[RMDB]
RNA sequence: GGGAACGACUCGAGUAGAGUCGAAAAGUGAGCGUCGCCGUCGCCCCGAACGACGCGAGCACGACGGAAAGAACGACGCCGACACGAAAGAUCGCGCUCGCACCGACCGGGCCGUGGACCGCAGCGACGCGUACCUAGUCUUCGGACUAGGUACGCGAAAAGAAACAACAACAACAAC
Reactivity to DMS in 0.01 (KOAc 150mM, MgCl2 10mM, bicine 150mM(pH8.5), 24C), signal-to-noise 2, nucleotides 027 to 126: g000u000g040a000g020c000g040u000c080g000c020c080g030u020c010g010c300c040c000c010g000a040a150c060g000a140c050g030c020g000a060g000c040a040c000g000a040c120g000g020a020a080a110g000a100a130c200g000a080c040g000c010c010g000a090c000a140c020g000a220a140a130g000a120u000c010g040c060g000c040u000c000g050c000a170c160c080g010a140c150c030g000g000g040c070c090g000u030g040g000a140c050c040g120c050a280g000c000g030a020
Reactivity to 2A3 in 0.01 (KOAc 150mM, MgCl2 10mM, bicine 150mM(pH8.5), 24C), signal-to-noise 3, nucleotides 027 to 126: g130u100g050a060g010c000g020u020c020g000c030c000g060u080c030g060c060c010c010c010g020a100a030c010g030a030c050g040c000g010a000g000c040a060c040g040a000c010g020g120a210a110a070g150a140a090c090g070a010c030g030c030c040g050a020c000a010c050g130a090a170a000g080a140u080c000g000c010g000c020u000c000g020c010a030c020c040g030a040c020c020g000g040g020c020c060g020u050g110g030a030c000c040g000c010a020g000c000g000a010